[RMDB]
RNA sequence: GGGAACGACUCGAGUAGAGUCGAAAAGAAAAUACAAGGCUCACAAAACCCUGUCCCAACCUCCACGUGGUGUCGGCUGGAUAAUGCUGCAUUAUGUUGCAUUUAUCAACUGGGAAGGGCAAAAAAACGAUGGGUAAUAGUUCGCUAUUACCCAUCGAAAAGAAACAACAACAACAAC
Reactivity to 2A3 in 0.01 (KOAc 150mM, MgCl2 10mM, bicine 150mM(pH8.5), 24C), signal-to-noise 2, nucleotides 027 to 126: g010a000a010a020a000u140a040c060a060a080g120g010c010u030c050a080c020a010a120a010a020c020c010c040u040g260u070c000c000c000a030a060c000c000u130c030c040a040c120g210u180g080g000u070g080u110c030g020g020c100u120g000g050a010u040a050a000u020g020c040u030g000c010a100u140u150a120u300g010u010u030g000c000a000u020u050u160a090u050c000a030a050c050u040g010g020g030a020a020g020g010g000c020a080a150a060a000a000a020a000
Reactivity to DMS in 0.01 (KOAc 150mM, MgCl2 10mM, bicine 150mM(pH8.5), 24C), signal-to-noise 1, nucleotides 027 to 126: g000a190a090a030a070u000a090c050a040a090g030g040c010u000c110a100c110a060a110a110a140c050c000c030u040g030u000c000c030c010a080a130c070c010u000c060c010a030c090g000u020g000g030u000g020u000c080g020g000c080u000g010g000a080u000a040a000u000g010c020u000g000c000a110u020u000a090u000g020u000u000g000c010a020u000u000u000a020u000c010a120a080c150u000g020g000g010a300a070g000g000g030c080a010a000a010a050a020a020a050
Annotation
This 177-nucleotide RNA was probed chemically with 2A3 and DMS. For DMS the reverse transcriptase was MarathonRT. The reactions ran in a buffer of 150 mM KOAc, 10 mM MgCl2 and 150 mM bicine (pH 8.5), at 24 C. The 2A3 profile rests on 1,239 reads. It was measured as part of the RMDB library M2PK90.